[RMDB]
RNA sequence: GGGAACGACUCGAGUAGAGUCGAAAAGAAGAUAAGAUACGAGACACCGUGGGCAGAUGACAAGAAAGUCCGUCGGUGUCGGUAAGGUCGUCAGUCACAGGCGACCGUUUUCUGUGACUUUAAAGAAAUGAUUAGGCCCAUUCGUGGGCCUAAUCAUAAAAGAAACAACAACAACAAC
Reactivity to 2A3 in 0.01 (KOAc 150mM, MgCl2 10mM, bicine 150mM(pH8.5), 24C), signal-to-noise 1, nucleotides 027 to 126: g000a010a010g110a020u230a110a020g070a100u060a130c150g100a010g000a010c000a000c000c000g010u000g000g000g000c010a060g060a300u190g010a200c020a000a080g120a090a020a000g000u000c000c000g040u060c000g000g010u000g000u030c000g000g000u060a020a020g060g000u000c000g000u000c000a000g060u090c080a010c000a080g000g000c000g000a000c000c000g020u050u000u000u000c000u000g020u000g100a020c000u010u060u300a080a270a000g050a000a070
Reactivity to DMS in 0.01 (KOAc 150mM, MgCl2 10mM, bicine 150mM(pH8.5), 24C), signal-to-noise 2, nucleotides 027 to 126: g000a140a070g010a080u000a070a020g000a070u000a010c000g020a180g000a010c000a000c000c000g070u000g030g010g000c010a050g050a100u010g000a240c300a120a170g000a060a220a090g020u000c000c000g000u000c000g000g000u000g000u010c000g000g000u010a090a110g010g020u000c000g030u000c010a000g000u010c220a120c090a060g000g000c000g000a020c000c000g000u000u000u000u000c010u000g010u000g000a170c080u000u000u040a020a080a120g010a090a120